[RMDB]
RNA sequence: GGGAACGACUCGAGUAGAGUCGAAAAGGCGUAGCCGACAACAUGCCCAGGUAGCCCAGACCAUCAAGGCUACGGUGCGUUGCGACGCACGGUCUGAUUCUUCACAACGACGUUCACCGCGUCUUCUACAACCGGCAAAGAUUCGUCUUUGCCGGAACACGCAUUAGUACUUCGGUACUAAUGCGUGAAAAGAAACAACAACAACAAC
Reactivity to 2A3 in 0.01 (KOAc 150mM, MgCl2 10mM, bicine 150mM(pH8.5), 24C), signal-to-noise 2, nucleotides 027 to 156: g000g000c050g040u040a020g000c020c010g040a040c020a100a000c020a030u150g020c000c000c040a040g130g040u050a040g020c000c000c100a010g010a020c010c020a060u130c060a060a070g000g000c010u010a010c010g000g010u020g010c000g020u050u040g040c110g130a000c000g060c010a010c020g000g030u000c000u010g040a040u110u070c070u110u120c080a080c080a250a090c080g030a000c000g050u140u190c070a070c140c050g000c000g020u040c000u080u000c030u120a140c060a160a080c020c000g000g020c000a000a020a000g010a000u050u130c190g070u020c150u000u000u000g000c020c010g000g000a000a000
Reactivity to DMS in 0.01 (KOAc 150mM, MgCl2 10mM, bicine 150mM(pH8.5), 24C), signal-to-noise 1, nucleotides 027 to 156: g000g000c000g000u010a060g010c020c000g010a190c070a060a040c000a130u000g010c010c010c080a070g020g010u000a050g040c020c000c050a200g000a200c060c130a090u010c050a100a160g030g020c010u000a070c010g010g010u000g020c010g070u000u000g050c120g000a130c050g020c020a110c030g000g030u000c020u000g010a180u010u010c010u000u000c090a110c050a080a190c070g000a030c050g030u030u000c030a070c170c040g000c040g000u000c000u000u000c050u000a070c190a140a110c000c020g000g020c000a020a040a010g010a070u000u000c280g010u000c000u000u000u000g020c010c010g000g010a000a010